Structure probing data (DMS and 2A3) for a 177-nucleotide construct. The data come from the RNA Mapping Database (RMDB), library TTRDES. DMS adducts were read by reverse transcription with MarathonRT. The RNA was probed in 150 mM KOAc, 10 mM MgCl2 and 150 mM bicine (pH 8.5) at 24 C.
RNA sequence: GGGAACGACUCGAGUAGAGUCGAAAAAAAAGAUAUGGAAGUACCGAGAAGCUGUGGGUGAUGACCAGAGCUCGGAAACGAGCUCUGCAAGCCCAUUGCUUCGAUGAGGUACUUCCUAAGUCAAAAAGGUAUUAACUAUGUUCGCAUAGUUAAUACCAAAAGAAACAACAACAACAAC
Reactivity to DMS in 0.01 (KOAc 150mM, MgCl2 10mM, bicine 150mM(pH8.5), 24C), signal-to-noise 4, nucleotides 027 to 126: a080a080a110a090g000a050u000a300u010g010g010a020a010g020u000a010c000c000g000a200g000a030a010g020c010u000g020u000g010g000g020u000g010a100u010g010a160c300c000a010g000a000g010c010u000c000g010g010a040a060a130c000g010a010g000c030u000c010u000g000c030a040a220g000c000c000c000a010u000u010g010c000u000u000c000g000a040u010g010a190g010g010u000a010c000u000u000c000c010u000a010a100g010u020c040a050a060a090a130a110
Reactivity to 2A3 in 0.01 (KOAc 150mM, MgCl2 10mM, bicine 150mM(pH8.5), 24C), signal-to-noise 2, nucleotides 027 to 126: a000a000a010a050g080a030u110a050u120g000g000a000a000g010u010a010c020c020g050a050g010a120a010g020c030u030g000u010g000g010g010u050g060a300u200g010a040c090c010a000g000a000g000c000u010c000g010g000a020a010a020c010g010a000g000c010u000c000u020g000c000a000a040g000c000c000c000a000u000u020g000c000u000u000c000g000a020u090g030a070g010g010u010a010c000u000u000c000c000u000a000a000g000u020c040a020a010a030a170a070